[RMDB]
RNA sequence: GGGAACGACUCGAGUAGAGUCGAAAAGAUAUGGACCUCCCAUCCUCCAACAGCUCGGAAACGAGACAUGGAGGUGGUGAGGUCCUAAGUCAAAAGUUUGGCCAUAUCUUCGGAUAUGGCCAAACAAUCUCAUAAGGCCGUUCGCGGCCUUAUGAGAAAAAGAAACAACAACAACAAC
Reactivity to DMS in 0.01 (KOAc 150mM, MgCl2 10mM, bicine 150mM(pH8.5), 24C), signal-to-noise 1, nucleotides 027 to 126: g010a070u000a300u010g000g030a010c010c000u000c000c000c000a010u010c010c000u000c000c000a040a080c230a180g000c000u000c000g000g000a050a150a190c000g000a010g000a030c110a250u000g010g000a000g040g020u010g040g000u000g000a000g030g010u000c000c000u000a010a030g010u010c030a080a100a070a100g000u000u000u000g000g010c000c000a020u000a000u010c000u010u000c240g040g000a010u000a000u000g000g000c020c000a000a000a000c000a060a040